[RMDB]
RNA sequence: GGGAACGACUCGAGUAGAGUCGAAAAGAAAGCUCCUCAGCCGUGUGGAGGAGAAUGGCUAUAACCACCGAAACCUGAGGAAACAGGAAGCCACAACGCAAGCCAUGUGGUUUGCACACGGAAGAAAGGCCGCAUCACUAUUCGUAGUGAUGCGGCCAAAAGAAACAACAACAACAAC
Reactivity to 2A3 in 0.01 (KOAc 150mM, MgCl2 10mM, bicine 150mM(pH8.5), 24C), signal-to-noise 1, nucleotides 027 to 126: g000a020a090a000g000c010u020c000c000u000c030a000g130c000c000g020u000g080u080g050g000a000g000g000a030g080a000a110u030g050g000c020u050a000u030a170a000c000c030a150c000c000g020a080a020a000c000c000u050g010a080g060g150a080a000a010c000a000g000g000a010a030g000c000c000a000c000a300a030c040g000c000a000a100g000c000c030a070u240g160u300g080g000u150u230u120g000c000a000c000a080c000g000g000a000a000g050a000a060a000